Description: An RNA of 207 nucleotides, treated with DMS and 2A3 and read out base by base. The data come from the RNA Mapping Database (RMDB), library OK3TST. The reactions ran in a buffer of 150 mM KOAc, 10 mM MgCl2 and 150 mM bicine (pH 8.5), at 24 C. For 2A3, 1,136 sequencing reads were counted. For DMS, 2,454 sequencing reads were counted. 2A3 adducts were read by reverse transcription with SuperScript II with manganese. DMS adducts were read by reverse transcription with MarathonRT.
RNA sequence: GGGAACGACUCGAGUAGAGUCGAAAAGGAAACAGUGCCCAGGAUAAUCAGUCAUUUGAAUGGUUGGUUCCCUCAUCUCUGCUUCACAGGACACUAAUGCAGCAGCAGAUGGCAAGCCAUUCUUGGUGACCUCAUUCUUUGAACAGGAUGAGGGCCCCUUUUAUUCCGGUUUCGACCGGAAUAAAAGAAAAGAAACAACAACAACAAC
Reactivity to DMS in 0.01 (KOAc 150mM, MgCl2 10mM, bicine 150mM(pH8.5), 24C), signal-to-noise 1, nucleotides 027 to 156: g000g020a180a040a090c070a030g020u000g000c030c020c020a120g010g030a070u030a070a050u010c060a070g010u000c070a130u010u030u000g000a040a050u000g010g000u000u000g000g020u010u020c010c000c000u000c010a030u000c010u000c000u000g000c000u000u000c040a100c110a190g030g050a190c140a130c000u010a090a090u000g010c030a040g020c020a040g020c130a060g020a050u010g030g010c040a060a100g010c000c010a030u000u000c040u000u020g010g000u020g010a180c000c000u020c010a020u000u000c020u000u000u020g050a200a190c220a020g010g010a000u000g020a040g020g010g000c020c100c040
Reactivity to 2A3 in 0.01 (KOAc 150mM, MgCl2 10mM, bicine 150mM(pH8.5), 24C), signal-to-noise 1, nucleotides 027 to 156: g040g020a100a060a000c060a080g060u080g080c030c030c010a020g090g000a100u170a150a090u100c030a020g100u030c030a080u080u170u230g030a040a010u010g000g010u020u040g040g030u020u020c000c000c000u000c000a000u000c010u010c000u010g000c000u040u040c020a050c020a110g090g110a100c040a020c140u080a100a050u080g000c030a020g010c000a010g000c000a000g020a010u010g000g030c090a060a010g040c000c000a010u000u030c000u000u090g040g000u050g090a080c010c000u000c000a000u020u000c010u070u050u210g090a100a030c030a060g010g010a010u000g000a000g010g010g030c000c000c010